[RMDB]
An RNA of 177 nucleotides, treated with DMS and read out base by base. It was measured as part of the RMDB library RFM100.
RNA sequence: GGGAACGACUCGAGUAGAGUCGAAAAUCAGAAUUUCAAGAGAAUUAAUAUUUUGGAAAAUGUGCUAAGGUAAAGAGUUAGAAGAUUAGUGAAGCGCAAUGAAUGAAAUGCAUUCUUUUAUGUGAAAUUGGAAGUGGAUUUUCGAAUCCACUUCCAAAAAAGAAACAACAACAACAAC
Reactivity to DMS in 0.01 (KOAc 150mM, MgCl2 10mM, bicine 150mM(pH8.5), 24C), signal-to-noise 1, nucleotides 027 to 126: u000c030a230g000a010a150u010u020u000c050a040a120g000a090g000a040a230u000u040a140a220u030a050u000u000u000u000g020g040a200a040a110a090u000g040u000g060c040u030a020a300g010g000u030a000a090a140g000a140g060u020u000a090g000a220a020g000a100u010u010a090g010u000g030a150a010g030c020g030c030a040a040u080g030a130a170u050g000a030a000a090u000g000c010a000u000u000c030u000u010u020u000a090u010g000u000g010a000a010a130
The DMS profile rests on 963 reads.